[RMDB]
RNA sequence: GGGAACGACUCGAGUAGAGUCGAAAAAGAGCUGCCUUUCCAGGAACAGGGAUUGAAAGACACAUGCAGCUGCUUCACUCUGAAAUGAUACUGGACAUCUGCACUGUGUCUCUUGGAGUGAUGUUAUCCACUUUUCUGUAUGGCUCUAACAAUAAAAACGAUCUUAGCUGUUCGCAGCUAAGAUCGUAAAAGAAACAACAACAACAAC
Reactivity to 2A3 in 0.01 (KOAc 150mM, MgCl2 10mM, bicine 150mM(pH8.5), 24C), signal-to-noise 2, nucleotides 027 to 156: a000g010a000g010c050u030g040c010c040u160u190u090c020c040a030g030g000a020a020c010a010g020g040g000a070u120u150g120a220a160a010g000a010c010a000c000a010u010g000c000a000g000c000u000g010c090u020u010c000a050c020u060c000u040g120a020a070a040u250g010a010u030a060c060u020g000g040a000c000a030u000c010u000g010c010a080c130u010g000u010g010u010c010u010c000u060u090g040g000a040g080u110g050a100u070g060u100u140a060u110c000c030a150c090u030u000u080u000c000u000g040u070a100u180g000g010c000u000c000u000a030a040c040a070a050u160a140a140a000a020